Description:
Chemical mapping of a 170-nucleotide RNA with 2A3 and DMS. Reactivities are rounded to 0.1 and cut off at 0 and 3. For 2A3, 4,337 sequencing reads were counted. DMS adducts were read by reverse transcription with MarathonRT. Conditions: 150 mM KOAc, 10 mM MgCl2 and 150 mM bicine (pH 8.5), 24 C. For DMS, 9,498 sequencing reads were counted.
[RMDB]
RNA sequence: GGGAACGACUCGAGUAGAGUCGAAAACAGUUGCAGUAAUUGCUGGAGUUGCUGGUGCUCGCAUUCCAGACGUACCUACUACAUUGGCUUGGGUGAACAAUCAGAUAAUUUUCUUUGUUUCUCGAGUGGAGAAAGCCGUUCGCGGCUUUCAAAAGAAACAACAACAACAAC
Reactivity to 2A3 in 0.01 (KOAc 150mM, MgCl2 10mM, bicine 150mM(pH8.5), 24C), signal-to-noise 2, nucleotides 027 to 129: c030a020g040u100u080g040c030a010g010u050a060a110u140u140g000c010u040g010g000a120g010u130u120g050c050u050g020g170u090g080c070u040c110g040c040a000u000u030c020c000a020g010a050c020g050u100a070c030c020u000a030c000u020a030c050a110u030u070g060g000c000u060u030g000g010g000u100g050a000a050c030a050a040u170c080a020g000a080u140a220a230u110u070u070u000c000u010u000u000g020u000u000u000c000u000c010g010a080g000u100g020g030a180
Reactivity to DMS in 0.01 (KOAc 150mM, MgCl2 10mM, bicine 150mM(pH8.5), 24C), signal-to-noise 3, nucleotides 027 to 129: c060a060g020u020u020g000c120a090g010u030a090a070u030u060g000c000u050g000g000a090g040u000u000g080c030u040g050g110u060g020c000u040c140g040c050a110u030u030c020c050a060g000a170c110g060u020a090c060c010u010a040c150u050a050c070a060u000u000g000g000c100u020u010g010g020g000u000g000a070a050c000a110a120u070c070a050g040a070u070a110a050u040u030u020u050c080u030u020u010g010u010u020u040c030u010c040g020a120g060u000g030g030a150